The record gives the reactivity of an RNA of 177 nucleotides to 2A3 and DMS.
2A3 adducts were read by reverse transcription with SuperScript II with manganese.
For 2A3, 5,339 sequencing reads were counted.
Reactivities are rounded to 0.1 and cut off at 0 and 3.
Values cover nucleotides 27 to 126.
Conditions: 150 mM KOAc, 10 mM MgCl2 and 150 mM bicine (pH 8.5), 24 C.
[RMDB]
RNA sequence: GGGAACGACUCGAGUAGAGUCGAAAAGGGAUUGAAAUGAAAGAUGUCAUGGCAAUAGGUGACAAUUUAAAUGACUUAUCAAUGUUAGAGAAAGUUGGCUAUCCAGUUGCGAUGGAAAAUGGUGCAGGUAGUGAUAACCAUUCGUGGUUAUCACUACAAAAGAAACAACAACAACAAC
Reactivity to 2A3 in 0.01 (KOAc 150mM, MgCl2 10mM, bicine 150mM(pH8.5), 24C), signal-to-noise 7, nucleotides 027 to 126: g050g020g060a080u090u070g090a100a100a140u190g050a080a100a070g130a050u120g050u100c010a020u010g090g020c030a060a080u070a120g040g050u020g030a030c010a030a020u030u060u120a120a210a090u070g010a010c000u070u120a080u240c060a120a070u170g040u120u080a060g010a020g000a140a070a010g020u050u040g030g000c030u040a030u080c010c020a020g010u040u040g010c020g030a020u050g000g070a050a040a040a090u110g050g020u070g030c020a020g070
Reactivity to DMS in 0.01 (KOAc 150mM, MgCl2 10mM, bicine 150mM(pH8.5), 24C), signal-to-noise 6, nucleotides 027 to 126: g000g000g000a110u000u000g010a060a100a070u010g020a110a050a070g010a080u020g010u010c010a020u010g010g020c040a030a060u000a070g000g010u010g010a060c070a030a050u010u010u000a070a070a090u010g010a010c030u020u020a110u050c180a110a060u040g010u010u010a090g000a070g000a050a040a020g010u000u000g010g000c130u000a060u010c010c030a180g020u000u010g010c030g010a070u010g000g020a030a020a060a090u000g000g000u020g010c060a080g000